Source information: An RNA of 177 nucleotides, treated with 2A3 and DMS and read out base by base. DMS (dimethyl sulfate) methylates the pairing face of unpaired adenines and cytosines. For DMS, 3,434 sequencing reads were counted. The reactions ran in a buffer of 150 mM KOAc, 10 mM MgCl2 and 150 mM bicine (pH 8.5), at 24 C. Values cover nucleotides 27 to 126. It was measured as part of the RMDB library M2PK50.

[RMDB]
RNA sequence: GGGAACGACUCGAGUAGAGUCGAAAACGAAUAGAAUUCGUUCUAUUCGAAUGACUGCUAAAAGCAGAGUUGACUGCGCCGAGCUGAAACGGCAAAGGAAAAAGUAGCCCAGAUUCGUCUGGGCUAAACUCCACUGAGUAUUCGUACUCAGUGGAGUAAAAGAAACAACAACAACAAC
Reactivity to 2A3 in 0.01 (KOAc 150mM, MgCl2 10mM, bicine 150mM(pH8.5), 24C), signal-to-noise 2, nucleotides 027 to 126: c000g000a020a000u010a000g010a010a020u040u030c120g030u050u000c000u010a000u000u000c010g000a030a020u070g100a060c020u030g030c060u100a110a090a060a070g010c020a020g030a020g110u100u060g150a150c010u030g000c010g000c010c010g030a050g030c120u230g120a130a060a080c020g070g000c000a020a050a020g080g000a050a120a030a020a000g070u030a000g000c000c000c000a000g020a000u050u050c080g060u000c050u000g010g000g000c000u000a000a000
Reactivity to DMS in 0.01 (KOAc 150mM, MgCl2 10mM, bicine 150mM(pH8.5), 24C), signal-to-noise 4, nucleotides 027 to 126: c010g000a020a020u000a020g010a010a070u000u020c120g030u000u000c000u000a010u000u000c000g010a100a120u000g010a120c010u000g030c030u000a090a080a080a210g010c000a020g000a210g010u000u000g010a160c000u000g000c300g000c000c000g020a090g010c130u010g000a070a100a130c020g000g000c020a030a250a080g010g000a080a080a080a090a110g000u000a010g010c000c000c000a010g000a030u000u010c200g000u000c000u000g030g000g010c010u000a000a010